[RMDB]
RNA sequence: GGGAACGACUCGAGUAGAGUCGAAAAAAGAAGAGGCUCUUGACCUUGUUAAAGAAAAUCCCUAUCAGUUAGUCGAAGAUCUACAAGGUUUUGGGUUUAAAAUGGCAGAUGCUCUCGCUGAAAACUUAGGGAUUGAAAGCGACUCUCCGAAACGUUAACGAUCAUACCAGUUCGCUGGUAUGAUCGUAAAAGAAACAACAACAACAAC
Reactivity to 2A3 in 0.01 (KOAc 150mM, MgCl2 10mM, bicine 150mM(pH8.5), 24C), signal-to-noise 1, nucleotides 027 to 156: a000a000g080a150a020g020a020g010g000c010u080c170u190u160g100a270c010c000u000u060g030u080u220a160a120a060g040a010a020a000a000u010c000c000c000u000a070u010c030a040g030u030u100a040g000u060c050g060a080a050g020a130u060c030u160a080c180a050a020g050g000u000u030u060u080g020g000g000u100u110u060a110a170a070a090u100g040g000c010a000g000a050u030g040c000u000c000u000c070g020c000u070g020a110a090a000a000c000u000u010a040g000g000g000a000u000u060g080a070a030a000g020c000g010a000c000u000c000u000c000c030g040a100a080a050c010g040u070u130a060

Structure probing data (2A3) for a 207-nucleotide construct. Source: RMDB library OK3TST, as collected in RNAgym. Values cover nucleotides 27 to 156.